[RMDB]
RNA sequence: GGGAACGACUCGAGUAGAGUCGAAAAACAGGUUACGACCUGAGGUGGCAUUGGGAAUGUCCAUCACAACCUGCCAACAUUCCAGGUUAUGUUGACGGGUCGUGAUGGGCACUCUCAGCGUCUCAAACCAGAUGUCCCUGUUCGCAGGGACAUCUGGAAAAGAAACAACAACAACAAC
Reactivity to 2A3 in 0.01 (KOAc 150mM, MgCl2 10mM, bicine 150mM(pH8.5), 24C), signal-to-noise 2, nucleotides 027 to 126: a000c020a030g000g060u110u100a080c170g060a040c050c000u010g040a030g080g070u100g020g030c020a000u010u100g080g000g000a010a060u000g000u010c000c000a000u000c000a010c000a020a020c000c000u010g000c020c000a000a000c000a010u110u170c060c060a060g250g040u160u080a020u000g000u000u000g040a010c030g000g000g000u000c000g000u000g000a000u010g010g000g000c000a000c000u000c000u000c020a000g000c020g010u000c020u020c030a110a110a090
An RNA of 177 nucleotides, treated with 2A3 and read out base by base.